[RMDB]
RNA sequence: GGGAACGACUCGAGUAGAGUCGAAAAGAUAUGGACGUCUACCCACCGCUUGAAGGUCGAAGAACUCGGAAACGAGGGAGACUUAAGAGCGAGGACGUCCUAAGUCAAAGUAGGCUUCGGCCUACAACAUAUUUGAAACGUUCGCGUUUCAAAUAUGAAAAGAAACAACAACAACAAC
Reactivity to DMS in 0.01 (KOAc 150mM, MgCl2 10mM, bicine 150mM(pH8.5), 24C), signal-to-noise 5, nucleotides 027 to 126: g000a120u010a150u010g030g010a020c010g010u000c020u000a100c010c010c010a300c090c010g000c020u000u000g010a250a070g010g030u000c000g000a120a080g000a130a190c000u010c000g000g000a110a080a190c000g010a020g000g000g000a070g000a020c010u000u000a020a290g000a010g010c000g000a070g010g010a010c000g010u000c000c000u000a010a070g010u010c150a090a090a120g000u000a000g000g010c000u000u000c200g030g000c010c000u000a010c010a070a220
Reactivity to 2A3 in 0.01 (KOAc 150mM, MgCl2 10mM, bicine 150mM(pH8.5), 24C), signal-to-noise 4, nucleotides 027 to 126: g070a080u230a160u280g000g010a010c000g020u010c000u130a300c010c010c000a020c000c010g000c010u020u000g030a120a030g050g000u010c020g080a270a050g030a060a030c000u020c020g020g040a080a050a030c010g010a010g030g000g030a020g000a010c000u040u030a080a000g010a000g010c000g010a010g000g000a000c000g000u000c000c000u020a070a010g050u030c110a200a070a040g000u010a000g000g000c000u050u080c300g150g000c000c000u000a000c000a010a000